[RMDB]
About this RNA
This 177-nucleotide RNA was probed chemically with DMS and 2A3. The data come from the RNA Mapping Database (RMDB), library OK1LIB. 2A3 adducts were read by reverse transcription with SuperScript II with manganese. For 2A3, 804 sequencing reads were counted.

RNA sequence: GGGAACGACUCGAGUAGAGUCGAAAAGAUUAAUUGGUCUUCAAUUAAAGGACUAAAAGAAAAUAUAGGUAAAAAUGGUGUUUGCUCUAACUAUUCACCUGACUAUGUUAACGAAACUUGGAACCAAAUAAGAUGCACCUUUCGAGGUGCAUCUUAUAAAAGAAACAACAACAACAAC
Reactivity to DMS in 0.01 (KOAc 150mM, MgCl2 10mM, bicine 150mM(pH8.5), 24C), signal-to-noise 2, nucleotides 027 to 126: g000a140u030u010a010a210u000u020g000g000u000c040u000u010c070a070a150u020u030a050a060a050g040g000a050c020u000a050a010a130a220g000a170a180a050a000u000a010u000a020g000g000u050a080a050a110a020a080u000g010g050u000g000u010u020u000g000c150u040c230u080a010a160c170u020a030u030u010c040a020c010c030u010g000a040c010u000a000u000g010u000u000a040a250c160g010a030a070a010c110u000u000g000g010a090a180c050c060a060a050
Reactivity to 2A3 in 0.01 (KOAc 150mM, MgCl2 10mM, bicine 150mM(pH8.5), 24C), signal-to-noise 1, nucleotides 027 to 126: g010a000u050u210a110a040u040u060g050g000u000c000u040u000c050a000a200u030u130a000a100a300g030g010a100c030u040a100a130a000a000g150a000a080a000a000u060a000u060a040g050g060u240a200a190a000a080a000u150g000g000u000g060u000u050u000g040c040u100c000u280a150a080c000u010a000u120u030c000a000c000c000u000g000a000c020u050a100u000g020u080u030a100a060c050g050a120a000a000c100u000u000g000g040a020a090c000c000a120a080